[RMDB]
RNA sequence: GGGAACGACUCGAGUAGAGUCGAAAAGAUAUGGAGAUCUCCCUUAGGCGAGGAUCUCGGAAACGAGGGAGCCUUUGGGAGAGUCUCCUAAGUCAAAUCUACGAACACCUUCGGGUGUUCGUAGAAACCCUGCAAUGUAGUUCGCUACAUUGCAGGGAAAAGAAACAACAACAACAAC
Reactivity to DMS in 0.01 (KOAc 150mM, MgCl2 10mM, bicine 150mM(pH8.5), 24C), signal-to-noise 1, nucleotides 027 to 126: g000a020u010a300u000g020g000a000g020a240u000c000u000c000c000c000u000u010a000g020g010c020g020a070g040g000a050u010c000u010c000g020g000a060a070a190c000g020a030g000g010g000a050g020c000c000u000u000u000g000g000g010a000g010a020g010u000c000u020c000c000u000a020a100g010u020c030a090a130a140u010c020u000a010c000g010a010a010c020a010c010c010u000u000c240g020g020g020u000g000u000u000c000g050u000a010g000a000a100a130
Source: RMDB library TTRDEL, as collected in RNAgym.
This 177-nucleotide RNA was probed chemically with DMS.
The RNA was probed in 150 mM KOAc, 10 mM MgCl2 and 150 mM bicine (pH 8.5) at 24 C.